The data come from the RNA Mapping Database (RMDB), libraries RFM100 and RFMREP. The record gives the reactivity of an RNA of 177 nucleotides to DMS and 2A3.
[RMDB]
RNA sequence: GGGAACGACUCGAGUAGAGUCGAAAACCGCGCUUGAUGAAUAUGCGUUAUGGCGCUUAUUCCUAUGCACAUCAUUUGGUCGAAGUAGCUGUGCGUUUUGCAGCUCCAAGCGCUAUCAAGAAACGGCACGACACUACUCUUUCGAGAGUAGUGUCGUAAAAGAAACAACAACAACAAC
Reactivity to DMS in 0.01 (KOAc 150mM, MgCl2 10mM, bicine 150mM(pH8.5), 24C), signal-to-noise 2, nucleotides 027 to 126: c000c000g000c060g000c000u000u030g000a050u000g000a110a020u000a020u000g000c030g030u000u020a140u030g020g040c010g000c000u000u010a030u000u000c030c090u000a080u010g000c030a050c030a010u000c060a170u000u000u010g010g020u000c030g000a080a060g000u000a200g010c120u000g030u000g000c000g000u020u040u000u030g000c090a070g010c110u050c030c030a020a060g000c010g010c010u000a040u020c160a060a080g030a060a050a020c000g000g000c160
Reactivity to 2A3 in 0.01 (KOAc 150mM, MgCl2 10mM, bicine 150mM(pH8.5), 24C), signal-to-noise 7, nucleotides 027 to 126: c000c010g000c000g000c030u050u030g020a040u040g010a100a090u070a050u090g000c010g050u120u120a210u240g220g000c000g000c000u020u050a050u040u040c000c000u040a050u130g040c060a060c020a120u120c010a040u030u070u150g110g010u070c050g040a130a030g030u090a040g010c010u000g020u030g030c020g020u030u050u090u170g040c050a030g020c010u000c030c010a000a000g000c000g000c010u090a110u140c080a020a030g070a100a060a010c020g030g000c050
The reactions ran in a buffer of 150 mM KOAc, 10 mM MgCl2 and 150 mM bicine (pH 8.5), at 24 C. For 2A3 the reverse transcriptase was SuperScript II with manganese.